[RMDB]
RNA sequence: GGGAACGACUCGAGUAGAGUCGAAAACGCUUCCGACCUUGACGUCCAAGAUGAGGGAGUCGGCACCGGCGGCGAUUUUCUUGCUCAUGAUGGAGCUUGCGAUCAGUGGGACGCAGUCGACGGUGGAAGUGUUUUCAUCAUUCGUGAUGAAAACACUAAAAGAAACAACAACAACAAC
Reactivity to DMS in 0.01 (KOAc 150mM, MgCl2 10mM, bicine 150mM(pH8.5), 24C), signal-to-noise 3, nucleotides 027 to 126: c080g000c020u010u000c000c010g010a150c120c020u010u000g010a100c140g020u010c090c010a110a090g000a070u010g010a270g000g000g010a100g000u000c040g010g000c080a040c040c040g000g010c030g000g000c030g010a080u000u000u010u000c030u010u000g010c010u000c010a110u010g020a160u010g010g000a040g010c020u000u000g010c250g010a070u000c040a150g020u000g010g000g010a120c060g040c080a180g010u000c030g000a050c050g000g010u000g000g010a070
Reactivity to 2A3 in 0.01 (KOAc 150mM, MgCl2 10mM, bicine 150mM(pH8.5), 24C), signal-to-noise 2, nucleotides 027 to 126: c030g010c040u060u020c010c010g060a110c010c030u040u050g050a100c060g130u100c040c050a100a050g040a290u160g020a070g010g050g030a040g040u060c020g100g000c050a030c010c000g040g020c020g040g000c020g010a010u100u020u090u150c030u070u070g000c000u000c030a080u160g170a180u220g260g020a040g000c000u020u040g030c020g080a170u040c020a050g140u180g060g100g000a000c020g000c050a020g030u020c020g000a020c020g010g000u010g000g030a010
This 177-nucleotide RNA was probed chemically with DMS and 2A3. The data come from the RNA Mapping Database (RMDB), library OK2TST. 2A3 adducts were read by reverse transcription with SuperScript II with manganese. For DMS, 2,818 sequencing reads were counted. Conditions: 150 mM KOAc, 10 mM MgCl2 and 150 mM bicine (pH 8.5), 24 C.